[RMDB]
RNA sequence: GGGAACGACUCGAGUAGAGUCGAAAAGGCUGCGUAUCACUCUAGGGUACGUGAUAGUGCGAUAUAAGAAGCACUGGUACAUGCCGGCAGGGACAGUUAAGAAAUGGCCGCAGUCUCGUGUCCCUGCAAAAGGAGUUCUCGUUCGCGAGAACUCCAAGCUACUAACAAGGUUCGCCUUGUUAGUAGCAAAAGAAACAACAACAACAAC
Reactivity to DMS in 0.01 (KOAc 150mM, MgCl2 10mM, bicine 150mM(pH8.5), 24C), signal-to-noise 1, nucleotides 027 to 156: g020g000c010u020g030c000g030u010a080u010c040a090c050u010c060u000a160g000g010g050u000a030c070g090u000g010a040u000a060g030u000g020c000g030a100u010a180u000a090a220g010a120a280g000c000a010c010u010g010g010u020a050c030a110u020g010c030c000g020g000c000a050g000g050g010a050c000a170g050u000u060a040a180g000a070a100a130u030g000g000c050c010g000c050a120g000u010c030u000c030g000u000g000u000c000c000c000u000g020c040a010a030a090a060g000g000a050g050u000u000c000u000c000g080u000u010c240g080c010g000a040g010a010a010c020u000c010c010a010a220
Reactivity to 2A3 in 0.01 (KOAc 150mM, MgCl2 10mM, bicine 150mM(pH8.5), 24C), signal-to-noise 5, nucleotides 027 to 156: g010g000c000u000g010c030g020u100a090u170c060a090c130u180c110u210a120g040g060g000u050a020c050g010u020g020a040u050a040g010u000g010c030g020a010u040a020u080a300a080g130a120a000g010c000a000c000u010g010g020u080a030c040a030u160g050c020c030g030g010c010a000g000g010g010a000c010a040g050u110u150a110a040g070a060a130a090u120g070g000c020c020g010c030a010g010u010c030u020c080g040u040g010u010c000c000c000u010g000c000a000a000a010a020g010g000a000g000u010u000c000u000c000g030u030u050c210g010c010g100a000g000a000a000c000u000c000c000a000a000